Structure probing data (DMS and 2A3) for a 207-nucleotide construct. For 2A3, 15,982 sequencing reads were counted.

RNA sequence: GGGAACGACUCGAGUAGAGUCGAAAAGGGGUCGUGUAGAAGUCCGUGUAAGAGGCUUGGAUUUAUAGGCUGAAGCCUCCACGGCCUAUUGUCAGCCUUAUCACGGUCACUACACGACGGAGGCACCCAAAGUAUUUGUUGUUCGCAACAAAUACAAGGUUGAAUAUUAGUUCGCUAAUAUUCAACCAAAAGAAACAACAACAACAAC
Reactivity to DMS in 0.01 (KOAc 150mM, MgCl2 10mM, bicine 150mM(pH8.5), 24C), signal-to-noise 2, nucleotides 027 to 156: g010g000g040g010u000c010g020u000g000u000a000g000a070a160g010u000c010c010g050u000g000u010a150a250g000a050g000g000c040u010u000g040g010a080u000u000u000a040u000a000g020g000c000u000g000a030a110g030c020c020u000c010c020a300c060g000g000c020c000u010a020u000u000g000u000c010a100g020c000c000u000u000a170u000c000a040c020g020g000u000c050a300c020u010a040c020a030c030g010a000c010g010g000a020g070g010c020a120c010c000c020a170a090a180g020u000a000u010u000u000g010u000u010g010u000u000c270g060c010a030a000c010a000a000a000u000a010c010a090a140
Reactivity to 2A3 in 0.01 (KOAc 150mM, MgCl2 10mM, bicine 150mM(pH8.5), 24C), signal-to-noise 9, nucleotides 027 to 156: g120g020g030g000u000c000g000u010g000u010a020g020a300a070g050u010c020c080g000u010g000u060a300a190g020a020g130g020c080u180u230g110g000a050u160u300u110a010u050a000g000g000c000u010g040a080a010g020c000c000u010c010c000a010c010g000g010c000c000u010a010u000u020g010u000c050a040g010c000c000u030u030a100u130c010a000c000g010g010u020c030a000c020u000a000c000a000c000g000a000c000g000g000a000g000g000c010a050c010c010c000a070a110a020g000u010a010u000u000u000g010u000u010g030u030u100c260g020c120a000a000c000a000a010a000u020a010c020a010a060